[RMDB]
RNA sequence: GGGAACGACUCGAGUAGAGUCGAAAACGGCUAAAACCCGAUACGCGCAAACGCUACCGUAUGAGCGGAAAACGCGGCGUGUAGUACAGGAGUUUGGCGCUUACCAUGAUCUGUCAGCGAACCGCGGGCUGGGACGAGGUUUCGACCUUGUCUCGGUAAAAGAAACAACAACAACAAC
Reactivity to DMS in 0.01 (KOAc 150mM, MgCl2 10mM, bicine 150mM(pH8.5), 24C), signal-to-noise 9, nucleotides 027 to 126: c120g000g000c030u010a040a030a070a080c080c000c010g000a100u010a020c030g010c010g010c020a050a060a300c060g000c050u010a140c030c030g010u010a090u040g000a120g000c000g000g000a060a040a090a110c100g000c250g000g000c020g000u010g000u000a030g010u030a090c090a110g000g000a080g010u000u000u000g010g010c050g010c050u010u010a110c040c030a060u020g000a060u010c040u010g010u010c030a080g000c000g000a080a070c040c030g000c040g000g000
Reactivity to 2A3 in 0.01 (KOAc 150mM, MgCl2 10mM, bicine 150mM(pH8.5), 24C), signal-to-noise 9, nucleotides 027 to 126: c010g030g000c030u050a020a010a020a040c000c000c000g010a010u020a030c010g010c000g000c020a050a050a020c050g000c020u020a020c000c010g020u040a110u200g130a080g030c000g010g000a020a040a020a030c040g000c010g000g000c000g000u040g000u010a050g020u050a030c040a060g010g010a100g030u020u040u050g050g000c030g000c050u020u050a040c010c010a070u080g030a050u070c040u070g050u050c020a010g010c010g020a070a030c010c020g010c020g010g030